[RMDB]
Structure probing data (2A3) for a 207-nucleotide construct.
High 2A3 reactivity points to a flexible backbone, as in loops and unpaired stretches.
The data come from the RNA Mapping Database (RMDB), library M2RFOK.
The RNA was probed in 150 mM KOAc, 10 mM MgCl2 and 150 mM bicine (pH 8.5) at 24 C.
Values cover nucleotides 27 to 156.

RNA sequence: GGGAACGACUCGAGUAGAGUCGAAAACGCAAAGCUGCAGCGAGGCGCUCUGGAGGCCUUGCCCCGCGCACUGCUCUUUACAUGGCCCGACGUGAGGGCACUUCGCGGGCAGUGCUGCGGCCUCGUGAAACUGCCCCUAAGUUCGCUUAGGGGCAAAGAGUCGAUAGUACUUCGGUACUAUCGACUCAAAAGAAACAACAACAACAAC
Reactivity to 2A3 in 0.01 (KOAc 150mM, MgCl2 10mM, bicine 150mM(pH8.5), 24C), signal-to-noise 1, nucleotides 027 to 156: c010g040c040a000a090a100g010c010u100g000c080a050g030c000g000a000g000g000c010g030c130u060c100u190g160g050a150g050g010c060c090u030u110g020c010c010c010c020g030c000g000c050a000c010u010g000c000u010c000u000u120u130a100c060a240u190g000g000c000c000c070g050a070c100g080u130g030a210g000g020g000c010a030c000u070u130c060g010c070g040g050g000c000a030g020u040g000c050u110g000c010g020g020c010c010u000c000g030u010g060a000a160a050c110u050g000c000c000c000c000u010a020a020g060u010u040c040g020c180u010u000a000g030g000g010g000c000a000a000a000